[RMDB]
This 177-nucleotide RNA was probed chemically with 2A3 and DMS. DMS adducts were read by reverse transcription with MarathonRT. It was measured as part of the RMDB library OK1LIB. 2A3 adducts were read by reverse transcription with SuperScript II with manganese. The 2A3 profile rests on 33,066 reads.
RNA sequence: GGGAACGACUCGAGUAGAGUCGAAAACAAGCUUUAUCUCGGGAGAUGAGGGUGUGUAUCUCAUACCUUGUCUCCACUGAGAUAUGCCCUCGCAUAUCCGAGUUGGCAGCUUUGCCUGAUACUAGGAUCUAGGCAUCGGCUUCGGUCGAUGUCUAGAAAAAGAAACAACAACAACAAC
Reactivity to 2A3 in 0.01 (KOAc 150mM, MgCl2 10mM, bicine 150mM(pH8.5), 24C), signal-to-noise 9, nucleotides 027 to 126: c060a030a010g020c010u110u160u070a010u020c000u000c000g010g000g000a030g010a030u060g040a010g000g040g010u030g010u010g040u100a190u100c120u020c060a020u220a300c000c000u010u020g010u000c000u000c000c000a010c010u080g000a000g000a000u010a010u040g010c000c010c000u010c010g060c070a100u090a070u170c030c010g010a010g020u100u130g100g000c020a020g010c040u090u110u110g010c000c010u050g060a060u060a230c080u060a060g060g040a040
Reactivity to DMS in 0.01 (KOAc 150mM, MgCl2 10mM, bicine 150mM(pH8.5), 24C), signal-to-noise 8, nucleotides 027 to 126: c180a070a060g010c040u010u020u010a010u000c000u010c010g010g000g000a030g000a020u010g010a020g000g000g020u010g020u000g010u050a120u050c180u020c010a010u000a080c020c020u000u000g000u000c000u000c000c010a000c060u020g010a000g010a000u000a010u020g020c000c010c010u010c040g020c230a120u040a100u030c130c010g000a030g010u010u030g010g020c030a070g010c100u010u010u010g010c020c000u010g000a120u040a050c060u020a100g010g020a130